Overview
Chemical mapping of a 177-nucleotide RNA with 2A3 and DMS. DMS adducts were read by reverse transcription with MarathonRT. It was measured as part of the RMDB library TTRDEL.
[RMDB]
RNA sequence: GGGAACGACUCGAGUAGAGUCGAAAAGAUAUGGAACUAAGCUAGGAACAAUUCCCGGAUCGGAAACGAUCCGCAUUGUCCUUGGACCUUAGUUCCUAAGUCAAAGACUUCGGUUCGCCGAAGUCAAGCAUCGUAAAUUGUUCGCAAUUUACGAUGCAAAAGAAACAACAACAACAAC
Reactivity to 2A3 in 0.01 (KOAc 150mM, MgCl2 10mM, bicine 150mM(pH8.5), 24C), signal-to-noise 2, nucleotides 027 to 126: g020a020u060a040u170g000g000a010a000c000u000a000a000g050c020u000a000g000g030a200a040c010a000a020u040u080c070c010c000g030g000a000u010c010g050g000a070a020a050c020g000a000u000c000c000g000c000a010u000u010g020u020c000c020u040u090g150g100a200c010c000u000u010a000g010u000u000c010c000u010a050a010g040u000c030a020a030a170g010a000c010u000u020c010g000g080u030u090c300g050c070c000g030a000a000g000u000c010a010a010
Reactivity to DMS in 0.01 (KOAc 150mM, MgCl2 10mM, bicine 150mM(pH8.5), 24C), signal-to-noise 3, nucleotides 027 to 126: g000a020u000a300u010g010g010a020a000c000u010a000a010g000c010u000a010g000g000a030a020c010a020a020u000u000c300c300c000g010g000a000u000c010g010g000a100a110a190c000g000a000u000c000c000g050c090a000u000u000g010u000c010c000u000u010g010g000a130c300c010u000u000a010g010u000u000c000c000u000a000a050g000u000c060a050a070a120g010a010c000u000u000c010g030g000u010u010c230g000c000c000g020a010a020g020u000c010a030a130

Conditions: 150 mM KOAc, 10 mM MgCl2 and 150 mM bicine (pH 8.5), 24 C. The DMS profile rests on 2,021 reads.